Chemical mapping of a 177-nucleotide RNA with DMS and 2A3. It was measured as part of the RMDB library RFM100. DMS (dimethyl sulfate) methylates the pairing face of unpaired adenines and cytosines. Conditions: 150 mM KOAc, 10 mM MgCl2 and 150 mM bicine (pH 8.5), 24 C.
RNA sequence: GGGAACGACUCGAGUAGAGUCGAAAAAGGGGCGCGUGGAAACGCCCAGGAGGCAGCGGCGACGGCGCAGCCUGGGACUGCCAGGAGCGCCGGGCGGGAAGCGGCCUGUGGCCGCCUGGCCUCUGACAUCUUAGCGGUACUUCGGUACCGCUAAGAUAAAAGAAACAACAACAACAAC
Reactivity to DMS in 0.01 (KOAc 150mM, MgCl2 10mM, bicine 150mM(pH8.5), 24C), signal-to-noise 1, nucleotides 027 to 126: a110g000g000g000g010c000g120c020g000u030g020g000a290a180a110c030g010c000c020c000a080g000g000a000g010g020c040a100g000c050g000g000c010g020a260c030g000g020c000g000c000a090g010c000c000u000g000g010g010a240c220u010g010c000c000a000g010g000a240g000c020g020c000c060g000g010g000c010g000g000g000a110a080g010c060g000g000c010c000u030g000u000g000g000c000c010g000c010c020u000g010g020c010c020u000c010u000g000a050c210
Reactivity to 2A3 in 0.01 (KOAc 150mM, MgCl2 10mM, bicine 150mM(pH8.5), 24C), signal-to-noise 2, nucleotides 027 to 126: a010g070g000g000g020c060g000c030g010u220g070g050a120a020a020c000g000c000c010c000a040g000g000a010g000g000c010a010g010c000g080g020c000g040a060c030g110g000c000g000c020a070g070c000c000u000g000g020g080a300c120u110g110c000c000a020g030g000a020g010c000g000c000c000g000g000g000c000g060g040g060a130a010g300c110g010g060c000c010u150g030u080g040g010c000c000g000c020c000u050g020g000c000c020u000c000u000g000a010c000